[RMDB]
RNA sequence: GGGAACGACUCGAGUAGAGUCGAAAAGUACGUGCUGGGCGUCGAUCCGGCGGCGCAGCGCCGCGGUCUCGGCCAGAUGUUGACGUCGAUCGGUAUCGUCUCGCUGGCCCGUCGGCUGGGCGGUCGGAAAACCAAACAUUUUCGAAUGUUUGGUUUUAAAAGAAACAACAACAACAAC
Reactivity to 2A3 in 0.01 (KOAc 150mM, MgCl2 10mM, bicine 150mM(pH8.5), 24C), signal-to-noise 4, nucleotides 027 to 126: g050u050a020c040g030u050g050c040u100g000g080g020c020g030u040c030g020a050u010c010c010g020g030c020g020g010c110g000c030a040g020c040g030c020c020g070c060g000g020u030c040u050c080g020g010c010c020a040g020a130u080g060u150u120g060a040c010g020u050c040g050a210u180c100g050g050u160a070u140c020g020u000c010u010c030g000c010u020g030g070c030c000c010g070u060c030g010g000c010u020g030g080g030c050g010g060u020c000g000g000
Reactivity to DMS in 0.01 (KOAc 150mM, MgCl2 10mM, bicine 150mM(pH8.5), 24C), signal-to-noise 9, nucleotides 027 to 126: g010u010a060c080g020u000g010c040u000g010g000g010c030g020u000c070g010a090u000c020c020g010g010c010g010g010c040g010c040a060g010c050g020c060c050g010c060g010g010u000c060u000c160g010g010c000c020a040g010a040u000g010u010u010g010a040c030g020u000c080g010a140u010c120g010g010u010a060u000c020g010u000c030u000c110g000c010u000g000g000c040c010c040g000u000c100g010g000c020u000g010g010g020c010g010g020u000c030g000g000
An RNA of 177 nucleotides, treated with 2A3 and DMS and read out base by base. DMS adducts were read by reverse transcription with MarathonRT. The DMS profile rests on 37,013 reads. The 2A3 profile rests on 5,622 reads.